[RMDB]
RNA sequence: GGGAACGACUCGAGUAGAGUCGAAAAGGAAGACUUCGGUCUUCCAAAGCGUACUACUCUUCUUCGAAGAACUUUGCGCAAGUCAGCUCCCAAAUAGGAGCUGAUGAUGACCGCAAAGGGAGAAGGGAGUAUCGCAAAAGUCGAGGUUCGCCUCGACCGAACCAGUAGACUUCGGUCUACUGGUUCGAAAAGAAACAACAACAACAAC
Reactivity to DMS in 0.01 (KOAc 150mM, MgCl2 10mM, bicine 150mM(pH8.5), 24C), signal-to-noise 1, nucleotides 027 to 156: g020g010a000a000g040a060c020u000u010c300g000g000u000c000u000u000c030c020a000a010a090g030c020g020u000a030c030u020a070c000u000c000u000u000c000u010u010c000g040a100a300g010a070a300c010u000u000u000g000c000g000c030a100a300g000u030c010a020g050c000u000c000c000c020a040a200a210u020a040g050g000a050g090c010u000g030a010u000g010a030u010g000a090c300c000g000c000a010a090a080g000g020g040a060g010a000a030g000g020g000a070g010u000a000u010c060g070c000a090a040a030a080g000u000c000g000a020g030g020u000u030c140g020c000c000u000c000g020a010c000
Reactivity to 2A3 in 0.01 (KOAc 150mM, MgCl2 10mM, bicine 150mM(pH8.5), 24C), signal-to-noise 4, nucleotides 027 to 156: g010g000a010a010g030a010c030u090u110c300g110g000u040c020u000u040c010c020a000a000a000g010c010g010u010a010c000u080a250c000u010c000u120u030c020u010u000c020g210a300a180g090a300a100c000u000u010u010g010c010g000c010a130a090g000u000c000a010g020c000u060c010c050c070a140a300a060u300a080g000g010a010g010c040u000g000a000u010g000a030u030g010a010c070c020g010c020a020a010a010g030g010g000a040g010a010a000g010g000g000a000g010u000a040u170c050g000c000a060a080a010a000g000u000c000g000a000g000g010u090u140c220g030c040c010u010c000g010a000c000
Conditions: 150 mM KOAc, 10 mM MgCl2 and 150 mM bicine (pH 8.5), 24 C. This 207-nucleotide RNA was probed chemically with DMS and 2A3. 2A3 is a SHAPE reagent: it acylates the 2'-hydroxyl of flexible nucleotides of all four kinds. It was measured as part of the RMDB library RNAMAK.